The record gives the reactivity of an RNA of 177 nucleotides to 2A3. It was measured as part of the RMDB library RFM100. The reactions ran in a buffer of 150 mM KOAc, 10 mM MgCl2 and 150 mM bicine (pH 8.5), at 24 C.
RNA sequence: GGGAACGACUCGAGUAGAGUCGAAAAUGAGGUAAAGCGAAUGAUUAGAGGAUUCGGGGAAGAAACUUCCUCGACCUAUUCUCAAACUUUAAAUCUGUAAGACCUGCAGGUUUCUUAAUUGAACUUGGGAUGUGUCAGAUUUCGAUCUGACACAUCCAAAAGAAACAACAACAACAAC
Reactivity to 2A3 in 0.01 (KOAc 150mM, MgCl2 10mM, bicine 150mM(pH8.5), 24C), signal-to-noise 2, nucleotides 027 to 126: u180g010a040g130g150u060a020a000a000g040c090g060a070a130u110g030a100u030u010a000g020a000g140g050a040u190u000c010g000g000g000g050a000a000g000a050a240a040c090u000u030c000c000u000c000g000a000c000c000u000a000u040u000c010u000c000a160a250a150c000u000u010u110a000a000a010u000c010u000g000u010a230a040g010a060c020c000u040g040c090a020g000g090u000u210u000c040u090u300a240a130u090u050g030a010a000c040u010u000g060
Values cover nucleotides 27 to 126. The 2A3 profile rests on 544 reads.